[RMDB]
RNA sequence: GGGAACGACUCGAGUAGAGUCGAAAACAAAGCGGUCAAGAGAGGGUGCUUCUCUCAGCCCUCUCACUGGGAAAUCUUUCUCUGGAAUCCCGAUAGGUUGUAGAGACUAGGGAGUGUUAUGGAGGGCACUACUCCCCGAGUUCGCUCGGGGAGUAGUAAAAGAAACAACAACAACAAC
Reactivity to DMS in 0.01 (KOAc 150mM, MgCl2 10mM, bicine 150mM(pH8.5), 24C), signal-to-noise 1, nucleotides 027 to 126: c130a040a160a080g010c130g000g010u000c050a120a050g010a020g010a020g000g000g000u000g010c060u020u010c010u010c030u040c050a300g000c000c000c010u020c010u000c020a070c110u020g000g000g000a030a070a130u010c070u000u000u010c030u030c080u010g030g000a070a080u000c000c000c040g000a170u030a090g010g020u010u020g010u000a060g020a090g000a040c200u000a030g000g010g000a040g000u000g010u020u020a040u040g000g020a060g020g010g000c150

This 177-nucleotide RNA was probed chemically with DMS. The data come from the RNA Mapping Database (RMDB), library OK2TRN. The RNA was probed in 150 mM KOAc, 10 mM MgCl2 and 150 mM bicine (pH 8.5) at 24 C.